Chemical mapping of a 177-nucleotide RNA with DMS and 2A3. It was measured as part of the RMDB library OK2TRN. The RNA was probed in 150 mM KOAc, 10 mM MgCl2 and 150 mM bicine (pH 8.5) at 24 C. For DMS, 1,776 sequencing reads were counted.
RNA sequence: GGGAACGACUCGAGUAGAGUCGAAAAAGAUGGCCUGCCAGUGGGCGUCGUCGAUGUGGUCGAGGGGCUGGACGGUUGCCAUUCCGCCAAUAUCUCACCGGACAACCGUACGCUGUGGGUUCCGGCACGCAUGAGUCAUGUUCGCAUGACUCAUGCGAAAAGAAACAACAACAACAAC
Reactivity to DMS in 0.01 (KOAc 150mM, MgCl2 10mM, bicine 150mM(pH8.5), 24C), signal-to-noise 2, nucleotides 027 to 126: a010g000a040u000g000g000c020c000u000g020c120c040a110g000u000g020g000g020c030g030u000c040g030u000c080g000a070u020g040u000g030g010u000c080g020a100g000g010g000g020c020u000g020g020a090c010g010g000u010u000g010c070c080a100u000u000c010c020g000c080c080a060a080u000a090u000c100u000c080a100c040c030g020g010a040c080a080a010c010c030g020u010a050c090g010c050u000g030u000g020g040g010u000u010c020c010g010g010c140a100
Reactivity to 2A3 in 0.01 (KOAc 150mM, MgCl2 10mM, bicine 150mM(pH8.5), 24C), signal-to-noise 2, nucleotides 027 to 126: a000g060a030u070g040g000c010c030u090g000c030c050a090g070u150g000g040g000c040g090u050c020g040u000c040g030a080u120g090u110g120g120u040c050g040a010g000g000g000g030c040u040g080g040a090c030g000g020u050u090g110c040c050a080u050u010c020c010g070c020c040a060a030u080a140u180c120u040c020a020c020c040g040g000a020c000a060a040c030c030g010u070a040c020g010c090u050g040u120g030g000g000u070u010c020c040g000g000c020a010